[RMDB]
RNA sequence: GGGAACGACUCGAGUAGAGUCGAAAAGGGGUCAUGGACGAUUGUCCAUCGAUCUCAGAACUACGUCUGAAGCCUCCACGGACGCUGAGGGAGGAUAGAGUCCAUGACGGAGGCACCCAAAGUUACAACGCACCCCUUCGGGGGUGCGUUGUAACAAUCAAACAUAGGUCUUCGGACCUAUGUUUGAAAAAGAAACAACAACAACAAC
Reactivity to 2A3 in 0.01 (KOAc 150mM, MgCl2 10mM, bicine 150mM(pH8.5), 24C), signal-to-noise 1, nucleotides 027 to 156: g070g010g050g010u010c020a010u020g000g000a010c020g090a160u140u300g020u000c040c000a050u260c020g010a000u010c000u000c000a000g000a070a080c300u300a110c050g000u000c010u000g020a050a010g000c000c000u030c010c000a000c000g030g000a000c000g000c030u000g000a010g000g030g010a000g020g000a000u020a000g090a020g000u000c000c000a000u010g000a000c000g010g000a000g000g010c000a020c010c010c000a070a100a010g010u000u000a010c000a000a000c000g050c000a010c050c020c000c050u040u200c250g050g000g000g000g010u010g000c000g000u000u010g000u000a000a000c000a000a000